[RMDB]
RNA sequence: GGGAACGACUCGAGUAGAGUCGAAAAGCCGACCCGAAGAGGAAAGAAGAACGCGAGACGCGAACCUGUGAGUGGAAACCCGCUUUAUUCACUGGGGUCGACAGCUCUGGGGAGAGAAGGGAGGAUCAAAGUUUGUGGUUCGCCACAAACAAAAGAAACAACAACAACAAC
Reactivity to DMS in 0.01 (KOAc 150mM, MgCl2 10mM, bicine 150mM(pH8.5), 24C), signal-to-noise 7, nucleotides 027 to 129: g000c000c020g040a000c000c030c030g000a110a040g020a060g000g000a050a050a030g020a030a020g010a030a030c150g030c030g030a010g030a090c110g010c060g000a090a090c050c030u020g000u020g030a050g000u030g000g020a060a080a090c000c020c020g030c040u030u040u040a050u040u030c050a090c100u000g000g000g000g000u020c040g000a150c110a060g010c070u030c040u030g030g010g010g010a060g000a050g000a000a020g000g070g000a040g010g020a060u000c070a060a040a100
Reactivity to 2A3 in 0.01 (KOAc 150mM, MgCl2 10mM, bicine 150mM(pH8.5), 24C), signal-to-noise 9, nucleotides 027 to 129: g020c010c010g030a050c010c010c010g010a060a020g030a010g050g040a070a020a040g050a030a000g040a060a010c040g040c040g060a040g040a050c040g050c020g050a040a040c000c020u050g020u060g070a020g010u050g030g010a040a060a040c020c010c000g060c060u080u120u100a140u100u080c030a030c100u060g010g000g010g020u020c010g030a040c020a040g010c000u030c030u060g000g000g010g000a030g000a000g010a020a020g010g000g000a020g010g000a010u050c030a000a050a030